[RMDB]
RNA sequence: GGGAACGACUCGAGUAGAGUCGAAAAGUCACGAGGUGCUUCGAAACUUACAGCAAAAGCGUCAUCGCAUCGAACAGCAGGAACGCACCGUGCGGCGGCGCACAGAGCUCGCAUCGUCGUCAACAUCCCUAGGAGUCCGAUUCGUCGGACUCCUAGGAAAAGAAACAACAACAACAAC
Reactivity to 2A3 in 0.01 (KOAc 150mM, MgCl2 10mM, bicine 150mM(pH8.5), 24C), signal-to-noise 2, nucleotides 027 to 126: g070u060c050a000c060g000a020g030g020u030g030c020u050u190c100g110a140a070a060c080u120u130a100c100a050g070c000a050a040a000a020g000c010g040u040c010a020u020c010g000c000a030u140c090g060a140a060c000a060g100c010a020g060g230a100a070c070g030c010a020c000c030g010u010g000c000g000g000c000g020g000c010g000c000a040c020a000g080a020g050c040u040c070g000c060a010u030c010g130u010c000g000u010c000a000a020c010a110u130c000
Reactivity to DMS in 0.01 (KOAc 150mM, MgCl2 10mM, bicine 150mM(pH8.5), 24C), signal-to-noise 2, nucleotides 027 to 126: g030u010c180a020c020g000a110g050g050u020g000c020u000u030c060g020a050a070a140c210u010u020a140c120a040g050c030a070a050a100a180g000c000g010u030c020a000u000c040g020c030a030u000c040g010a080a180c270a090g010c040a080g080g010a090a110c100g030c030a180c090c080g000u000g000c080g010g000c110g000g000c020g030c010a050c100a010g010a190g050c060u000c110g000c030a020u000c020g030u040c030g000u000c040a080a020c110a110u020c030

This 177-nucleotide RNA was probed chemically with 2A3 and DMS. The 2A3 profile rests on 1,596 reads. For 2A3 the reverse transcriptase was SuperScript II with manganese. The data come from the RNA Mapping Database (RMDB), library OK2TST. The RNA was probed in 150 mM KOAc, 10 mM MgCl2 and 150 mM bicine (pH 8.5) at 24 C.